This 177-nucleotide RNA was probed chemically with DMS and 2A3.
For 2A3, 641 sequencing reads were counted.
The RNA was probed in 150 mM KOAc, 10 mM MgCl2 and 150 mM bicine (pH 8.5) at 24 C.
For 2A3 the reverse transcriptase was SuperScript II with manganese.
[RMDB]
RNA sequence: GGGAACGACUCGAGUAGAGUCGAAAAUAAGCGUGGUGUCUCGUGAUCAGCUCAUUAAGCCCACUUAGAUAUGCUACGCUGUAUUUGGGACUAACCUCGGGUGUUGGUUUGGGUAUGGCAAACGCUGCAACACCGUCGCAUUCGUGCGACGGUGUUGAAAAGAAACAACAACAACAAC
Reactivity to DMS in 0.01 (KOAc 150mM, MgCl2 10mM, bicine 150mM(pH8.5), 24C), signal-to-noise 2, nucleotides 027 to 126: u010a050a000g000c100g060u010g000g000u020g000u010c050u000c300g030u020g010a000u020c300a180g000c020u020c250a180u030u060a100a000g000c000c130c010a080c010u060u000a110g010a050u020a000u000g010c050u000a010c030g050c010u020g000u000a000u010u020u000g010g000g000a040c060u050a090a160c240c000u000c020g010g000g000u000g000u010u000g020g000u000u000u000g000g010g000u000a060u010g010g000c070a030a080a080c080g000c060u040g000
Reactivity to 2A3 in 0.01 (KOAc 150mM, MgCl2 10mM, bicine 150mM(pH8.5), 24C), signal-to-noise 1, nucleotides 027 to 126: u030a000a030g020c000g000u000g030g030u030g000u000c000u000c010g010u000g030a100u060c050a000g020c000u070c030a240u120u260a070a000g020c000c000c000a010c050u030u260a040g020a090u020a010u060g020c000u030a030c010g000c010u000g010u000a020u000u000u000g050g010g060a000c000u010a010a010c000c000u000c000g000g000g030u030g000u010u090g060g000u010u010u050g000g010g000u140a080u070g010g000c020a000a100a060c040g000c060u000g000